RNA sequence: GGGAACGACUCGAGUAGAGUCGAAAAGGGAUGGGAUCCGAAGCCCCAUUGAGGGAUAAUACAGGCUCUCCCAUCCAACUCCUAUUCCAACACGUCCUCUUCGUACAGAGUGGUAACAUGUGUCACCUAUACUAAUGACCGUUCGCGGUCAUUAGAAGUAACAGACCCUCUUCGGAGGGUCUGUUACAAAAGAAACAACAACAACAAC
Reactivity to 2A3 in 0.01 (KOAc 150mM, MgCl2 10mM, bicine 150mM(pH8.5), 24C), signal-to-noise 1, nucleotides 027 to 156: g000g030g000a000u000g000g000g000a050u120c020c060g010a070a070g070c020c020c000c000a190u100u160g050a300g100g000g000a020u090a300a080u150a110c230a110g000g000c000u000c000u000c070c000c000a000u000c000c000a000a000c000u000c000c000u060a190u060u220c030c080a010a010c010a000c010g000u050c000c000u120c040u090u070c060g020u050a020c010a110g000a010g040u050g030g030u040a110a000c110a160u080g080u010g080u080c000a220c060c000u150a020u110a190c000u000a040a000u000g000a000c000c020g020u070u080c170g020c010g160g000u010c000a000u000u000a000g000a000a060
Background:
The data come from the RNA Mapping Database (RMDB), library M2RFPK. The record gives the reactivity of an RNA of 207 nucleotides to 2A3. Values are in units of 0.01, from 0 to 300, in steps of 10. The reactions ran in a buffer of 150 mM KOAc, 10 mM MgCl2 and 150 mM bicine (pH 8.5), at 24 C.